Chemical mapping of a 207-nucleotide RNA with DMS and 2A3. 2A3 adducts were read by reverse transcription with SuperScript II with manganese. The reactions ran in a buffer of 150 mM KOAc, 10 mM MgCl2 and 150 mM bicine (pH 8.5), at 24 C. For DMS the reverse transcriptase was MarathonRT. The DMS profile rests on 5,975 reads.
RNA sequence: GGGAACGACUCGAGUAGAGUCGAAAAUUACUCUUGUUAGGUGGAAGUUGAUGGUCGCCGAGCCAGUCCGUACAUCCAAAAAGGACUCUAUGUAGUAGGAAGUCGAGAGCCUAUGAGAGUUAGAGUCAUGCCUAUUUUGUGUUCGCACAAAAUAGAACAAAUGUUGUCAGUUCGCUGACAACAUUUGAAAAGAAACAACAACAACAAC
Reactivity to DMS in 0.01 (KOAc 150mM, MgCl2 10mM, bicine 150mM(pH8.5), 24C), signal-to-noise 3, nucleotides 027 to 156: u000u000a080c030u010c020u000u010g000u010u010a050g010g020u000g000g000a050a190g020u010u000g020a130u010g010g010u000c040g030c090c040g000a160g010c010c020a080g020u000c010c030g030u000a060c060a110u010c050c050a030a060a090a130a130g010g000a030c010u000c020u010a040u010g000u010a230g000u000a040g020g010a080a100g010u000c120g000a180g020a230g010c020c020u000a020u000g000a290g000a170g010u010u010a020g000a080g010u000c030a090u010g010c060c000u000a020u000u000u000u000g040u000g010u000u000c300g030c010a030c000a010a020a010a010u000a040g000a100a150
Reactivity to 2A3 in 0.01 (KOAc 150mM, MgCl2 10mM, bicine 150mM(pH8.5), 24C), signal-to-noise 4, nucleotides 027 to 156: u110u070a060c010u010c000u040u070g060u120u090a060g000g040u040g020g040a110a110g030u090u110g050a070u040g040g040u050c030g020c170c050g030a020g000c010c000a020g050u020c010c000g000u020a020c020a090u030c040c050a100a060a010a020a030g090g000a000c000u000c010u020a050u100g060u020a040g000u000a000g040g020a090a040g040u060c090g020a030g020a000g260c000c000u010a010u030g040a080g000a010g060u020u030a010g000a000g030u010c020a030u100g020c010c000u010a000u000u000u000u000g010u010g030u040u050c140g040c080a000c000a000a000a000a000u000a020g000a030a020